[RMDB]
RNA sequence: GGGAACGACUCGAGUAGAGUCGAAAAGGUCACGUUAAAGUUGACGAUCCAAUGUAUUCGACCUUGUUAAAUGAAGUCGAAAAAGGUGGUAAAUACACGGGAUUACACACGAAACCUGAUGUGAUAGCGUUCGACAGUGAUUCGUCACUGUCGAACGAAAAGAAACAACAACAACAAC
Reactivity to 2A3 in 0.01 (KOAc 150mM, MgCl2 10mM, bicine 150mM(pH8.5), 24C), signal-to-noise 1, nucleotides 027 to 126: g090g010u000c000a000c050g000u030u090a160a020a060g030u010u020g130a080c050g000a000u050c000c000a010a040u070g030u050a050u010u040c050g030a010c000c000u040u070g140u120u170a080a160a050u120g200a080a060g090u120c080g000a180a010a000a000a030g050g050u130g000g030u120a120a070a000u020a030c040a000c040g000g000g010a030u020u090a030c080a010c000a010c090g080a100a050a040c040c010u000g030a100u020g050u020g020a060u080a010g110
Reactivity to DMS in 0.01 (KOAc 150mM, MgCl2 10mM, bicine 150mM(pH8.5), 24C), signal-to-noise 2, nucleotides 027 to 126: g010g020u020c050a060c020g000u000u000a050a100a110g010u000u000g020a160c170g000a040u000c000c000a040a010u000g000u000a030u020u000c030g000a040c020c000u000u000g020u000u000a050a120a200u010g000a080a150g000u020c150g010a040a110a040a030a050g030g010u000g010g000u010a080a020a050u000a010c010a020c300g010g000g000a020u000u000a100c110a040c260a100c200g000a090a040a050c050c060u000g000a060u000g000u000g000a090u000a100g000
Chemical mapping of a 177-nucleotide RNA with 2A3 and DMS. Conditions: 150 mM KOAc, 10 mM MgCl2 and 150 mM bicine (pH 8.5), 24 C. For DMS, 1,225 sequencing reads were counted. The data come from the RNA Mapping Database (RMDB), library OK2TRN.